[RMDB]
RNA sequence: GGGAACGACUCGAGUAGAGUCGAAAACACAGAAUACGGCCGAUUUGACCCAGGAGCCAUGAACUACACAAAAUUGAUACUGAGUGAGAGGGACCGUCUUGGCAUCAAGACCGUAUGGCCAACAAGGAAGCAUUACAGCCUUCGGGCUGUAAUGCUUAAAAGAAACAACAACAACAAC
Reactivity to DMS in 0.01 (KOAc 150mM, MgCl2 10mM, bicine 150mM(pH8.5), 24C), signal-to-noise 1, nucleotides 027 to 126: c180a000c180a100g020a140a060u000a080c000g050g000c050c000g000a200u000u000u010g000a130c300c060c000a300g000g010a200g120c000c090a080u010g000a220a160c070u000a060c010a010c180a050a110a020a010u000u000g000a110u070a060c300u000g000a190g000u000g000a110g000a090g060g000g000a130c160c200g020u000c090u000u070g000g000c300a180u080c030a030a080g000a060c000c000g000u010a020u000g090g000c060c000a040a090c220a100a080g000g020
The record gives the reactivity of an RNA of 177 nucleotides to DMS. Source: RMDB library OK1LIB, as collected in RNAgym. The reactions ran in a buffer of 150 mM KOAc, 10 mM MgCl2 and 150 mM bicine (pH 8.5), at 24 C.